[RMDB]
RNA sequence: GGGAACGACUCGAGUAGAGUCGAAAAUCAGGACUGUUCGCAGUCCUGAAAACCCAGACCCGAAUCCACCCAUGGACUCUAGGACGGAACCCAGCCAGGGAAAAAGGAGGGUGUUCGCACCCUCCAACUAGAUAGGAAACUUCGGUUUCCUAUCUAGAAAAGAAACAACAACAACAAC
Reactivity to 2A3 in 0.01 (KOAc 150mM, MgCl2 10mM, bicine 150mM(pH8.5), 24C), signal-to-noise 2, nucleotides 027 to 126: u010c000a000g000g000a000c010u010g050u050u070c180g010c090a000g000u000c010c000u020g020a020a000a010a000c010c000c000a030g090a050c010c010c020g060a030a040u040c030c000a030c040c040c020a070u080g040g010a080c020u030c060u130a060g040g040a040c040g040g030a040a050c000c010c000a020g060c010c040a050g030g000g050a040a070a020a030a030g000g000a010g000g030g000u010g010u020u050c190g030c100a000c000c000c000u000c000c000a000a000
Reactivity to DMS in 0.01 (KOAc 150mM, MgCl2 10mM, bicine 150mM(pH8.5), 24C), signal-to-noise 4, nucleotides 027 to 126: u010c000a010g010g010a020c000u010g000u010u010c180g010c010a020g010u000c000c000u000g000a000a020a100a150c020c010c000a130g000a110c070c020c030g010a110a080u000c040c020a100c070c050c030a080u000g000g000a050c030u000c030u000a080g010g000a090c050g000g000a090a090c020c000c020a070g000c060c040a060g010g010g020a040a050a070a100a110g010g010a000g000g010g020u000g020u010u000c190g010c020a010c000c000c000u000c010c000a010a030